[RMDB]
RNA sequence: GGGAACGACUCGAGUAGAGUCGAAAAGUAACAAUCUUCGGAUUGUUACAUAGCCUCCAGGUGGAAACCAAAUCCUUAGAAAGAAAAGAGAAAGAAAAAGAAGUGACUACCUGUUCGCAGGUAGUAAGCUAGGAACUAAAUUCGUUUAGUUCCUAGCAAAAGAAACAACAACAACAAC
Reactivity to 2A3 in 0.01 (KOAc 150mM, MgCl2 10mM, bicine 150mM(pH8.5), 24C), signal-to-noise 5, nucleotides 027 to 126: g000u000a000a000c000a010a010u000c010u030u040c130g030g000a000u000u000g000u000u010a000c000a000u020a010g060c000c010u000c030c030a020g030g040u050g050g090a140a070a070c010c000a060a060a070u070c010c010u110u120a070g090a080a120a010g040a020a100a030a010g070a020g050a040a070a020g070a020a080a020a000a010g090a080a010g070u050g100a000c000u000a000c000c000u000g030u030u060c280g000c060a000g000g000u000a010g010u000a000a010
Reactivity to DMS in 0.01 (KOAc 150mM, MgCl2 10mM, bicine 150mM(pH8.5), 24C), signal-to-noise 4, nucleotides 027 to 126: g000u000a010a010c000a000a010u000c000u000u030c190g030g000a010u000u000g000u000u000a000c000a050u010a110g010c040c010u000c070c080a090g010g020u000g010g010a100a090a080c060c050a080a090a080u000c030c020u000u020a070g010a060a050a090g000a030a030a050a050g010a060g000a050a050a060g000a030a030a030a080a060g000a060a070g000u000g000a050c000u000a000c010c000u000g000u000u020c160g020c010a000g010g010u000a000g010u000a010a070
Notes: The record gives the reactivity of an RNA of 177 nucleotides to 2A3 and DMS. The 2A3 profile rests on 7,992 reads. DMS adducts were read by reverse transcription with MarathonRT. Values are in units of 0.01, from 0 to 300, in steps of 10.